The record gives the reactivity of an RNA of 207 nucleotides to 2A3 and DMS. DMS (dimethyl sulfate) methylates the pairing face of unpaired adenines and cytosines. The RNA was probed in 150 mM KOAc, 10 mM MgCl2 and 150 mM bicine (pH 8.5) at 24 C. The DMS profile rests on 3,108 reads. Values cover nucleotides 27 to 156.

[RMDB]
RNA sequence: GGGAACGACUCGAGUAGAGUCGAAAACAUUACGAAUUGAGUCGCAAAUUGUAGAAUUAGCUACUCUACGAUUUAGUGAGCGUUAGUAACGUUGUAAUAUAAUAUAGUCUUUGGAAGGAUUAUAUUGGAGCCGCGGACAAGUUCGCUUGUCCGCGAAGACGUAUCUUUAGUUCGCUAAAGAUACGUCAAAAGAAACAACAACAACAAC
Reactivity to 2A3 in 0.01 (KOAc 150mM, MgCl2 10mM, bicine 150mM(pH8.5), 24C), signal-to-noise 5, nucleotides 027 to 156: c030a040u120u210a020c040g050a110a090u160u180g040a090g090u020c010g000c010a000a000a020u000u020g000u010a010g010a030a030u050u030a040g040c040u060a030c010u000c000u000a000c000g010a000u000u010u060a080g000u030g040a060g070c020g020u030u090a050g020u060a070a040c070g000u010u020g000u040a120a100u100a090u020a150a000u000a000u000a010g010u000c040u050u080u140g150g060a110a070g020g000a000u000u000a010u010a010u010u020g040g030a050g090c070c000g000c000g000g000a010c000a000a010g010u030u090c100g020c150u000u000g000u000c000c000g000c000g000a000a000
Reactivity to DMS in 0.01 (KOAc 150mM, MgCl2 10mM, bicine 150mM(pH8.5), 24C), signal-to-noise 1, nucleotides 027 to 156: c040a080u010u000a010c010g040a080a000u000u000g020a080g020u000c000g040c020a030a040a060u000u000g010u000a020g020a070a050u010u000a220g000c220u000a080c110u010c020u000a000c000g010a010u000u000u000a130g020u020g010a020g010c010g030u000u010a080g010u000a010a010c040g000u020u000g000u000a050a130u010a080u000a030a010u000a030u000a020g020u010c000u000u000u000g020g020a260a230g000g000a030u000u000a010u000a020u000u000g000g050a170g010c120c020g030c010g050g000a040c000a030a030g030u000u010c300g030c000u010u000g030u000c000c000g110c010g000a000a050